RNA sequence: GGGAACGACUCGAGUAGAGUCGAAAAGAUAUGGAAACACGGUAGACAUGACGGUCGGAAACGACGACGUCAACAGCUACGUGUUUCCUAAGUCAAAGUCAUAACACCGUUCGCGGUGUUAUGACAACUCGCCUAAUAACUUCGGUUAUUAGGCGAGAAAAGAAACAACAACAACAAC
Reactivity to 2A3 in 0.01 (KOAc 150mM, MgCl2 10mM, bicine 150mM(pH8.5), 24C), signal-to-noise 2, nucleotides 027 to 126: g000a010u040a000u060g010g020a010a010a010c020a000c040g150g190u180a020g140a220c020a040u030g010a000c010g010g000u020c000g000g000a000a030a010c020g000a010c020g120a050c020g020u010c000a020a060c090a090g080c000u000a010c010g000u000g000u000u020u000c000c000u000a010a010g000u000c070a120a130a000g010u000c000a000u000a000a000c000a000c020c000g010u050u060c280g040c010g160g000u000g000u010u000a000u000g000a000c010a020a000
Reactivity to DMS in 0.01 (KOAc 150mM, MgCl2 10mM, bicine 150mM(pH8.5), 24C), signal-to-noise 3, nucleotides 027 to 126: g060a040u000a250u000g010g000a010a030a000c000a010c000g020g030u010a020g030a210c080a190u000g000a000c000g000g010u000c000g000g000a060a020a140c010g000a020c010g010a170c010g010u000c000a020a130c280a120g020c010u020a000c000g000u000g000u000u000u000c000c000u010a010a070g000u010c000a160a100a120g010u000c000a000u020a010a000c000a010c000c010g030u000u000c200g020c000g000g000u000g010u000u000a010u010g000a000c000a030a080